Notes:
The data come from the RNA Mapping Database (RMDB), library TTRDEL. An RNA of 177 nucleotides, treated with DMS and read out base by base. For DMS, 754 sequencing reads were counted. Conditions: 150 mM KOAc, 10 mM MgCl2 and 150 mM bicine (pH 8.5), 24 C.

[RMDB]
RNA sequence: GGGAACGACUCGAGUAGAGUCGAAAAGAUAUGGAGUCGAGCAACAGCCGUUCGGUCGGAAACGACCGACGGACAUGCUCGGCUCCUAAGUCAAAGAUCGGUCUAAAGUUCGCUUUAGACCGAUCAACUUAAGCGCAAGCUUCGGCUUGCGCUUAAGAAAAGAAACAACAACAACAAC
Reactivity to DMS in 0.01 (KOAc 150mM, MgCl2 10mM, bicine 150mM(pH8.5), 24C), signal-to-noise 1, nucleotides 027 to 126: g000a100u020a300u020g000g000a020g020u000c000g020a000g000c000a060a130c300a140g010c000c000g000u020u020c010g000g000u020c000g010g020a130a030a200c020g020a010c000c010g050a000c000g000g010a080c170a100u010g010c000u000c000g000g000c000u050c000c000u000a000a000g000u000c040a150a180a140g020a000u000c000g010g000u000c000u000a000a010a000g000u000u000c170g020c000u000u000u000a000g000a010c000c000g000a000u000c020a000a100